[RMDB]
This 177-nucleotide RNA was probed chemically with 2A3 and DMS. The data come from the RNA Mapping Database (RMDB), library OK2TRN. DMS adducts were read by reverse transcription with MarathonRT.
RNA sequence: GGGAACGACUCGAGUAGAGUCGAAAAGGUAAGGCACACCGUGAGUGGAUGUGCCACUAAGAAGGAGGCAGCAGGCUGAGCGUGGUGGCUCACGCCUGUAAUCCCAGCUCUUUGGGAGGCCAAGGUGUCGUUCUGGUGCAUUCGUGCACCAGAACGAAAAAGAAACAACAACAACAAC
Reactivity to 2A3 in 0.01 (KOAc 150mM, MgCl2 10mM, bicine 150mM(pH8.5), 24C), signal-to-noise 1, nucleotides 027 to 126: g090g030u150a080a150g000g000c000a010c000a000c010c020g000u110g300a130g060u300g030g010a260u040g020u000g030c000c020a000c000u000a000a050g080a000a000g060g130a080g030g030c020a030g000c000a000g030g000c010u000g000a000g000c040g000u120g060g060u040g110g030c000u000c040a020c060g000c000c010u010g000u000a000a020u000c000c000c000a010g020c010u170c010u210u140u040g010g030g020a000g060g000c020c040a010a050g000g010u090g000
Reactivity to DMS in 0.01 (KOAc 150mM, MgCl2 10mM, bicine 150mM(pH8.5), 24C), signal-to-noise 2, nucleotides 027 to 126: g010g030u010a150a090g030g020c010a000c010a030c000c000g000u020g030a160g010u000g050g010a080u000g050u000g020c010c000a020c070u000a090a110g040a090a180g010g000a180g040g010c080a180g000c010a030g000g010c000u000g000a010g010c010g010u000g050g000u000g000g000c010u000c000a000c250g000c000c010u000g010u000a010a070u020c010c000c000a130g020c160u000c130u020u000u000g000g000g000a060g000g030c020c070a040a040g030g000u010g000
The DMS profile rests on 1,322 reads. 2A3 adducts were read by reverse transcription with SuperScript II with manganese.